[RMDB]
RNA sequence: GGGAACGACUCGAGUAGAGUCGAAAAAUUGACAUAAACACGGCUGAAUCCGUAAAUGAUCUAGUUCUGGCAUGUUUAUUUGACUUGUCAUUUGAUACGACUCUUAUGGAAAAUGAAAGCUUUGAAGGAUACUCGCGCAUUUCGAUGCGCGAGUAUCAAAAGAAACAACAACAACAAC
Reactivity to 2A3 in 0.01 (KOAc 150mM, MgCl2 10mM, bicine 150mM(pH8.5), 24C), signal-to-noise 2, nucleotides 027 to 126: a000u110u070g070a010c000a030u300a000a080a000c040a000c260g000g040c030u070g000a080a000u000c040c000g070u040a000a030a000u140g000a080u000c000u040a040g040u180u000c000u000g020g000c000a000u010g050u000u070u060a300u180u120u300g100a090c070u030u000g000u060c010a070u000u020u160g150a160u120a130c020g000a000c000u000c040u000u000a010u110g000g080a000a090a110a110u180g100a030a030a030g060c000u150u150u080g070a110a070g090